[RMDB]
RNA sequence: GGGAACGACUCGAGUAGAGUCGAAAAGAUAUGGACGUGUAAUCGCUUUGAUCAUGUGUAUCGGAAACGAUACCAUGGGAGCGAUACACGUCCUAAGUCAAACUGGACAGACUUCGGUCUGUCCAGAGGGAGGCAUAAUGUUCGCAUUAUGCCUCCCAAAAGAAACAACAACAACAAC
Reactivity to 2A3 in 0.01 (KOAc 150mM, MgCl2 10mM, bicine 150mM(pH8.5), 24C), signal-to-noise 2, nucleotides 027 to 126: g000a000u000a010u040g000g000a010c040g050u030g000u050a300a300u000c000g010c060u300u300u100g030a020u010c010a010u030g200u020g000u050a010u000c000g000g000a000a020a000c010g010a000u000a000c000c010a010u010g000g000g010a020g010c000g000a000u000a000c000a000c000g010u010c000c010u010a010a000g000u010c000a000a010a080c020u010g000g000a020c000a010g000a000c010u080u270c300g120g000u000c000u040g000u000c000c000a010g010a010

An RNA of 177 nucleotides, treated with 2A3 and read out base by base. The data come from the RNA Mapping Database (RMDB), library TTRDES.